[RMDB]
RNA sequence: GGGAACGACUCGAGUAGAGUCGAAAACUGUGGAGUCCUGCAAUUUCUGACUCAUUGUAUGUAAAAACUCAUUAAAGCACUGCCCACACCAGAGAAGGGAGGCUGUCUAAUUUGGAGACUGCAGACCAUCCAACAAAAGAGAGAGUAUUCCUCUCAACUGACGUAGUCAGUUCGCUGACUACGUCAGAAAAGAAACAACAACAACAAC
Reactivity to 2A3 in 0.01 (KOAc 150mM, MgCl2 10mM, bicine 150mM(pH8.5), 24C), signal-to-noise 7, nucleotides 027 to 156: c030u040g020u060g060g020a020g030u050c030c030u030g000c010a040a130u020u070u030c060u090g080a080c030u040c130a090u120u160g030u090a140u080g070u130a070a100a070a100a090c050u090c080a080u080u180a140a050a000g020c030a040c120u080g010c010c010c000a090c010a060c040c040a050g010a030g010a230a130g030g010g010a020g000g020c020u020g030u030c030u060a130a180u100u080u120g030g000a020g010a040c040u030g000c010a000g020a040c020c020a080u030c020c000a040a040c040a070a160a070a010g090a000g000a000g000a000g020u060a180u120u050c020c010u000c000u000c000a010a060
Reactivity to DMS in 0.01 (KOAc 150mM, MgCl2 10mM, bicine 150mM(pH8.5), 24C), signal-to-noise 3, nucleotides 027 to 156: c030u010g050u010g010g020a210g000u000c090c040u000g020c040a040a060u000u020u010c040u010g010a080c090u010c050a150u010u010g010u030a060u000g030u000a070a060a120a080a060c020u000c050a130u000u000a050a080a060g010c010a060c030u000g010c000c000c010a180c070a170c090c090a180g000a140g010a110a130g010g000g000a060g010g010c030u000g000u000c050u000a050a110u000u000u000g000g000a080g000a120c010u000g010c050a070g010a060c030c030a130u000c020c040a060a120c090a030a080a040a090g020a070g000a080g010a130g000u000a130u000u000c050c000u000c000u000c010a050a110
About this RNA
The data come from the RNA Mapping Database (RMDB), library OK3TST. Chemical mapping of a 207-nucleotide RNA with 2A3 and DMS. The RNA was probed in 150 mM KOAc, 10 mM MgCl2 and 150 mM bicine (pH 8.5) at 24 C. For 2A3, 4,706 sequencing reads were counted.